Description: The data come from the RNA Mapping Database (RMDB), library M2PK50. Chemical mapping of a 177-nucleotide RNA with DMS and 2A3. DMS adducts were read by reverse transcription with MarathonRT. 2A3 adducts were read by reverse transcription with SuperScript II with manganese.

RNA sequence: GGGAACGACUCGAGUAGAGUCGAAAAACACGGAACUUCGGUUCCGUGUAUAGGGACGAAAUAACACGAUAGCGCUUGUCGCCCGAGCAAAAUGGCGGAAAAACUGCAUCCUCUUCGGAGGAUGCAAUUUAAUGUCUGUGUUCGCACAGACAUUAAAAAAAGAAACAACAACAACAAC
Reactivity to DMS in 0.01 (KOAc 150mM, MgCl2 10mM, bicine 150mM(pH8.5), 24C), signal-to-noise 4, nucleotides 027 to 126: a040c000a000c010g010g000a010a000c000u000u010c170g050g000u000u000c000c010g040u010g000u000a010u010a090g010g000g000a080c060g010a070a070a060u000a070a070c090a110c080g000a090u000a060g000c030g020c020u000u000g010u000c020g010c000c010c030g010a070g010c100a040a050a080a050u000g000g020c040g000g010a060a040a070a060a100c170u000g000c000a000u000c000c000u000c000u000u010c200g030g000a010g000g000a000u000g010c000a000a000
Reactivity to 2A3 in 0.01 (KOAc 150mM, MgCl2 10mM, bicine 150mM(pH8.5), 24C), signal-to-noise 3, nucleotides 027 to 126: a000c000a000c000g010g030a000a000c010u070u080c160g070g010u000u000c000c010g000u010g000u000a010u060a000g040g010g040a030c050g090a090a120a090u190a110a050c060a000c100g100a040u080a040g090c010g000c030u020u050g040u090c020g010c030c010c000g030a030g030c060a000a040a040a160u110g060g020c010g060g060a030a080a000a020a000c050u030g000c000a010u000c000c000u030c040u010u060c250g040g000a000g000g010a000u000g000c000a000a010
The 2A3 profile rests on 3,612 reads. The DMS profile rests on 5,116 reads. Conditions: 150 mM KOAc, 10 mM MgCl2 and 150 mM bicine (pH 8.5), 24 C.